[RMDB]
This 177-nucleotide RNA was probed chemically with DMS and 2A3.

RNA sequence: GGGAACGACUCGAGUAGAGUCGAAAAGAGAGCACAGGUGUAACUGUGAUGUCAUAGUGCCGAGACUACUUUCCUUUAACCAUUGGGGUUAAGUUGGGCAGCCCAUUUAGUUUACACGCGCAUAAGACUUUGGUACUCCAUUCGUGGAGUACCAAAGAAAAGAAACAACAACAACAAC
Reactivity to DMS in 0.01 (KOAc 150mM, MgCl2 10mM, bicine 150mM(pH8.5), 24C), signal-to-noise 2, nucleotides 027 to 126: g010a040g000a070g030c000a050c070a060g000g000u010g000u010a060a040c010u010g030u020g000a110u040g000u000c030a100u010a100g000u010g000c040c010g030a100g000a140c040u000a050c100u020u000u000c000c010u040u040u000a080a030c140c140a200u040u000g000g000g000g000u010u010a010a020g020u010u000g000g000g030c070a040g070c020c010c040a060u030u030u000a090g010u050u000u000a010c010a080c060g000c130g000c060a100u050a060a040g020a070
Reactivity to 2A3 in 0.01 (KOAc 150mM, MgCl2 10mM, bicine 150mM(pH8.5), 24C), signal-to-noise 5, nucleotides 027 to 126: g070a000g000a010g010c030a000c000a010g000g070u060g020u160a120a020c000u000g010u000g030a050u100g140u030c030a100u100a120g070u040g060c000c000g020a030g030a080c030u030a020c010u130u090u090c020c000u070u070u120a100a080c030c020a110u100u250g090g000g000g020u060u070a020a040g040u060u070g010g000g020c000a030g000c000c010c010a020u090u100u080a040g030u010u020u050a010c030a000c040g050c010g000c050a040u060a250a040g040a060

The RNA was probed in 150 mM KOAc, 10 mM MgCl2 and 150 mM bicine (pH 8.5) at 24 C. For DMS, 3,123 sequencing reads were counted. Reactivities are given for positions 27 through 126.